[RMDB]
RNA sequence: GGGAACGACUCGAGUAGAGUCGAAAAUCGAUGGCGUUCGCGCCAUCGAAGAGCCGUACCGCGUAGCACGCGGAUAGGAGUGAAGAUAUCGAAGGCCAUGGAGGAGGCGUGCUUUCGAGCACGCCAAGAUCAAGGUUUUCUUCGGAAAACCUUGAUCAAAAGAAACAACAACAACAAC
Reactivity to 2A3 in 0.01 (KOAc 150mM, MgCl2 10mM, bicine 150mM(pH8.5), 24C), signal-to-noise 2, nucleotides 027 to 126: u030c000g000a000u000g000g000c030g050u030u050c240g000c020g000c160c020a000u010c000g040a000a000g000a010g020c020c010g040u080a040c000c020g000c000g040u050a030g120c200a010c060g030c010g030g010a020u110a030g040g020a030g020u070g050a080a070g050a140u100a030u180c040g030a040a030g010g000c010c010a050u140g070g070a150g050g030a050g010g020c020g000u000g010c030u050u090u150c250g040a030g000c000a000c000g000c040c000a000a000
Reactivity to DMS in 0.01 (KOAc 150mM, MgCl2 10mM, bicine 150mM(pH8.5), 24C), signal-to-noise 2, nucleotides 027 to 126: u000c000g020a010u010g000g010c000g010u020u010c200g040c000g010c000c000a010u000c000g000a000a050g000a110g040c020c010g010u020a130c010c020g010c020g010u010a100g030c100a300c020g030c010g010g000a060u000a040g000g010a130g000u010g000a080a070g000a050u000a050u000c070g010a050a120g020g010c020c040a040u010g020g000a120g000g000a250g010g000c000g050u000g000c030u000u000u020c150g020a020g000c000a000c000g000c010c010a010a040

This 177-nucleotide RNA was probed chemically with 2A3 and DMS. The DMS profile rests on 1,280 reads. Source: RMDB library M2PK50, as collected in RNAgym.